The record gives the reactivity of an RNA of 177 nucleotides to 2A3 and DMS. For 2A3 the reverse transcriptase was SuperScript II with manganese.

RNA sequence: GGGAACGACUCGAGUAGAGUCGAAAACUUAACAUAAUCUCGUAGUGACCGGUGUUUACAGUAUUCCAUGAUGAUAUAUUGUGCAUCAUCUUCUUGAAAUUGGUCAUAAAAUUUUACGAUAUUGUCACUAUCACUGGGAUUUCGAUCCCAGUGAUAGAAAAGAAACAACAACAACAAC
Reactivity to 2A3 in 0.01 (KOAc 150mM, MgCl2 10mM, bicine 150mM(pH8.5), 24C), signal-to-noise 3, nucleotides 027 to 126: c010u090u090a020a010c000a100u140a100a040u010c020u010c090g020u000a060g020u000g020a010c030c050g000g020u040g060u040u110u060a040c000a020g010u020a030u030u080c120c100a110u160g050a100u050g020a000u090a000u020a030u210u160g070u080g050c010a020u000c000a030u000c020u090u000c030u080u100g060a070a080a070u100u070g000g010u020c020a010u100a030a220a050a070u220u280u080u030a010c020g000a000u000a040u040u020g040u000c020a000
Reactivity to DMS in 0.01 (KOAc 150mM, MgCl2 10mM, bicine 150mM(pH8.5), 24C), signal-to-noise 2, nucleotides 027 to 126: c050u000u010a090a110c140a060u000a050a050u000c080u000c010g010u000a090g000u020g000a020c020c020g000g000u010g000u000u010u000a010c050a020g010u020a010u010u000c080c250a080u010g040a110u000g020a050u000a060u000a090u020u010g020u020g000c060a000u000c010a060u000c070u000u000c110u000u000g010a040a050a050u000u000g020g010u010c040a010u010a060a080a060a130u010u020u010u000a020c030g000a020u000a030u000u000g010u000c160a170